The record gives the reactivity of an RNA of 207 nucleotides to DMS and 2A3. Reactivities are given for positions 27 through 156. The DMS profile rests on 9,853 reads. The RNA was probed in 150 mM KOAc, 10 mM MgCl2 and 150 mM bicine (pH 8.5) at 24 C.
[RMDB]
RNA sequence: GGGAACGACUCGAGUAGAGUCGAAAAAAUGUCACAGCCAUAAUCUCACGGGAACCGGGAAAGUGCUGUUAGCUCAUGUCCACAAUGUGUACCAGAGCCUGAUUCCCUGAGGCAGAGCCUAUGUUACCGUAUUUUACCCCAAGAGAAGAGAAAUCCAUAAUUAUCAUCAGUUCGCUGAUGAUAAUUAAAAAGAAACAACAACAACAAC
Reactivity to DMS in 0.01 (KOAc 150mM, MgCl2 10mM, bicine 150mM(pH8.5), 24C), signal-to-noise 4, nucleotides 027 to 156: a050a060u000g030u000c040a060c080a090g000c030c020a120u000a090a160u000c010u000c020a060c090g010g000g020a070a060c020c020g020g010g010a070a080a120g000u000g040c020u000g000u000u000a110g020c030u000c060a110u000g000u010c030c070a100c080a110a080u000g020u020g020u010a070c080c040a110g010a090g010c010c010u000g000a110u000u000c010c000c000u010g010a040g040g010c050a110g000a100g030c030c020u000a050u000g010u000u010a090c050c040g040u000a120u010u000u000u000a090c020c010c030c020a060a140g010a130g000a050a090g010a130g020a070a070a110u000c020c030a210
Reactivity to 2A3 in 0.01 (KOAc 150mM, MgCl2 10mM, bicine 150mM(pH8.5), 24C), signal-to-noise 6, nucleotides 027 to 156: a000a010u160g020u030c050a030c010a020g010c010c000a050u120a140a060u070c010u000c030a040c120g010g010g010a010a030c040c030g020g010g040a110a200a070g140u140g090c030u040g040u060u060a040g030c010u010c040a050u050g070u060c080c010a070c050a110a150u120g010u020g000u040a030c040c020a000g000a010g070c000c010u040g010a060u010u010c000c010c000u010g020a010g000g020c010a020g030a020g030c000c040u110a070u090g050u030u040a030c020c030g030u020a090u020u090u060u110a070c020c000c000c020a070a010g040a010g020a120a030g040a020g050a030a140a030u080c050c100a030